Chemical mapping of a 207-nucleotide RNA with DMS and 2A3. Values are in units of 0.01, from 0 to 300, in steps of 10. The 2A3 profile rests on 1,684 reads.
[RMDB]
RNA sequence: GGGAACGACUCGAGUAGAGUCGAAAAGGUGCUCUGAAUGGAGUGCUCUACUGAGAUUAUAAAAUAGAAGGUAAGCUAUUAUCUCUUACAACAGGGCAGGGCUUGUUGGAAUAGGAGGUAAAGUCUAAAAACUACCUCACCUUCGGGUGAGGUAGAAUCAUUAAGGUUCGUUCGCGAACCUUAAUGAAAAAGAAACAACAACAACAAC
Reactivity to DMS in 0.01 (KOAc 150mM, MgCl2 10mM, bicine 150mM(pH8.5), 24C), signal-to-noise 1, nucleotides 027 to 156: g010g040u000g020c030u010c030u000g040a160a160u000g010g000a050g060u000g020c000u000c020u000a070c030u000g010a140g000a140u000u000a060u020a060a140a110a140u010a130g010a120a120g090g010u000a070a090g020c020u000a060u000u000a030u000c030u030c000u000u000a070c040a070a120c020a050g010g000g000c050a230g010g010g020c030u000u000g040u000u000g010g000a070a180u000a040g000g010a010g000g000u000a040a040a120g010u010c000u000a010a010a040a070a170c010u010a000c010c000u010c010a040c000c010u010u000c240g060g020g080u010g020a000g000g000u000a000g000a020a060
Reactivity to 2A3 in 0.01 (KOAc 150mM, MgCl2 10mM, bicine 150mM(pH8.5), 24C), signal-to-noise 3, nucleotides 027 to 156: g040g010u040g020c010u030c020u070g230a170a140u300g020g010a010g010u030g000c030u030c020u070a100c040u060g050a030g040a110u120u130a120u220a120a060a060a040u120a090g060a130a010g050g030u110a090a000g020c030u060a090u240u020a040u030c010u010c000u020u040a020c020a060a000c010a050g000g040g020c050a060g080g050g070c030u020u020g010u000u000g020g000a130a080u060a090g000g010a000g010g000u020a010a010a000g020u020c040u110a120a070a000a000a010c010u000a000c010c000u000c000a000c020c000u020u050c210g080g000g000u000g000a000g000g000u000a000g000a000a000
For DMS, 2,007 sequencing reads were counted.